[RMDB]
RNA sequence: GGGAACGACUCGAGUAGAGUCGAAAACUGUCAGAAUAUAAAUGUCCAAUUGGACUAGGUGAUCUCAACCGAUGUUUCGGACAGCGGUUCGAUUCCGCUCAACUCCACUUUUUGGGGUUGUAAUGGUGAAAUCUAUGUUGUUCGCAACAUAGAUUUCAAAAGAAACAACAACAACAAC
Reactivity to DMS in 0.01 (KOAc 150mM, MgCl2 10mM, bicine 150mM(pH8.5), 24C), signal-to-noise 5, nucleotides 027 to 126: c070u010g010u010c020a050g000a030a050u010a110u020a050a120a080u020g000u010c000c000a300a160u030u020g020g000a010c010u000a070g000g010u020g010a110u000c140u030c100a160a040c010c010g000a130u010g010u000u000u010c000g010g010a020c030a000g020c040g010g010u000u000c020g000a300u010u000c000c000g000c020u000c010a010a010c010u000c000c020a080c300u000u010u000u000u000g000g000g000g000u010u000g000u010a050a170u010g010g000u060
Reactivity to 2A3 in 0.01 (KOAc 150mM, MgCl2 10mM, bicine 150mM(pH8.5), 24C), signal-to-noise 7, nucleotides 027 to 126: c030u030g090u090c040a060g110a200a030u180a020u060a150a140a070u130g000u000c010c020a120a300u200u300g000g000a000c000u020a030g020g020u040g070a140u070c070u030c150a030a040c010c010g030a040u100g060u040u030u070c020g000g010a020c020a020g000c010g020g020u000u020c010g000a010u030u010c000c000g000c010u010c000a000a010c000u000c010c010a060c100u100u130u060u240u210g010g000g010g000u000u000g000u030a060a080u090g050g010u060
An RNA of 177 nucleotides, treated with DMS and 2A3 and read out base by base. The reactions ran in a buffer of 150 mM KOAc, 10 mM MgCl2 and 150 mM bicine (pH 8.5), at 24 C.